[RMDB]
RNA sequence: GGGAACGACUCGAGUAGAGUCGAAAACAAGAAGUUCCCGGAGGGAUCCAAGAGACGGACGACUUUCCCCUAUUGGUUGGGAAAAGUCCCGGAACCAGGAAAUGGGAAAGAGACGGUAGAAAAGAGCGUGCAGACUUCUUCGGAAGUCUGAAAAGAAACAACAACAACAAC
Reactivity to 2A3 in 0.01 (KOAc 150mM, MgCl2 10mM, bicine 150mM(pH8.5), 24C), signal-to-noise 8, nucleotides 027 to 129: c070a020a050g130a040a000g050u040u020c000c000c000g000g000a010g020g020g000a020u020c020c010a060a020g030a010g020a060c030g010g010a020c030g000a020c020u030u000u010c000c000c000c010u090a200u190u300g130g040u120u090g000g000g000a060a080a010a020g040u010c000c010c000g000g030a000a020c030c000a000g040g020a030a080a070u160g010g000g000a000a070a030g030a010g000a020c030g000g040u100a040g090a040a070a020a000g060a020g030c060g020u110g040
Reactivity to DMS in 0.01 (KOAc 150mM, MgCl2 10mM, bicine 150mM(pH8.5), 24C), signal-to-noise 9, nucleotides 027 to 129: c090a070a050g020a070a090g000u020u000c000c010c000g010g000a040g000g050g000a020u030c050c090a090a110g000a090g030a060c100g010g000a090c110g020a050c040u020u010u020c000c000c010c080u020a140u050u040g000g000u060u000g000g010g000a020a020a040a040g000u000c020c070c060g020g020a100a070c080c050a090g000g000a030a060a050u020g020g020g000a030a040a030g000a080g020a070c140g010g010u050a080g000a030a040a060a050g000a050g040c090g020u020g030